[RMDB]
RNA sequence: GGGAACGACUCGAGUAGAGUCGAAAAUUCUUCUCAUGAGCUCCUCUCUGUCAAUCCAGUGGCAGUGUAUGGAUUCGCACGAGAAGUAGAGUGAUUCACAGUUUAACAGGUGUUUCCACUGCAUUGGCUAGUGAGAUGAGUUCGCUCAUCUCACUAGAAAAGAAACAACAACAACAAC
Reactivity to 2A3 in 0.01 (KOAc 150mM, MgCl2 10mM, bicine 150mM(pH8.5), 24C), signal-to-noise 7, nucleotides 027 to 126: u050u010c010u030u000c010u010c020a050u170g050a020g050c010u010c000c000u020c010u000c000u010g010u010c010a020a120u110c040c080a140g080u050g030g000c030a030g010u000g010u060a140u190g020g010a020u140u080c060g000c020a040c070g020a010g000a020a000g000u040a040g020a020g030u080g020a070u080u080c040a020c020a080g080u080u090u140a170a080c090a070g050g080u020g010u020u030u030c100c010a020c020u060g020c070a130u130u130g130g000
Reactivity to DMS in 0.01 (KOAc 150mM, MgCl2 10mM, bicine 150mM(pH8.5), 24C), signal-to-noise 6, nucleotides 027 to 126: u010u030c020u010u000c000u000c020a130u030g020a110g000c300u010c000c010u000c000u020c000u010g010u000c010a060a080u020c190c230a100g020u020g010g000c000a020g010u000g010u040a040u030g020g020a050u020u030c080g000c030a010c140g020a010g000a020a010g010u010a060g000a050g000u000g010a080u000u010c020a030c050a110g010u030u020u040a100a100c140a080g000g000u000g000u010u000u000c050c010a100c050u000g010c120a130u000u000g010g010
Structure probing data (2A3 and DMS) for a 177-nucleotide construct. Conditions: 150 mM KOAc, 10 mM MgCl2 and 150 mM bicine (pH 8.5), 24 C. For DMS the reverse transcriptase was MarathonRT.